[RMDB]
RNA sequence: GGGAACGACUCGAGUAGAGUCGAAAAAGCGUAGUCGGUUACGACCGACUACGCAUUUGGCCCAUGGGGAAAGAAGCCUCGCAACUUCCCCAUGACCCAAACGGCAUAGCUUACGAGCUAUGCCGAACAAUUGGGUUAUGUUCGCAUAACCCAAUUGAAAAGAAACAACAACAACAAC
Reactivity to DMS in 0.01 (KOAc 150mM, MgCl2 10mM, bicine 150mM(pH8.5), 24C), signal-to-noise 8, nucleotides 027 to 126: a040g010c000g020u000a000g010u010c010g020g010u000u010a110c240g030a060c000c000g020a010c000u000a000c000g010c000a000u000u000u000g000g000c060c040c000a020u000g020g000g000g000a040a020a060g010a120a300g000c040c170u030c300g000c020a060a270c040u000u000c000c000c000c000a000u010g010a300c040c000c020a030a050a200c010g010g010c000a010u000a000g000c000u000u010a090c190g010a030g000c000u000a000u000g010c000c000g000a010a050
Reactivity to 2A3 in 0.01 (KOAc 150mM, MgCl2 10mM, bicine 150mM(pH8.5), 24C), signal-to-noise 8, nucleotides 027 to 126: a000g000c000g000u000a000g010u010c020g040g020u040u050a110c280g040a010c060c000g000a000c000u000a000c000g010c000a000u010u010u030g020g010c000c010c000a000u010g010g000g010g010a110a170a090g050a080a040g030c050c120u130c090g010c050a040a060c010u000u000c000c000c000c000a000u020g020a040c010c010c010a050a080a030c010g000g000c000a010u000a000g000c000u080u050a080c270g070a020g000c000u000a000u000g000c000c000g000a000a000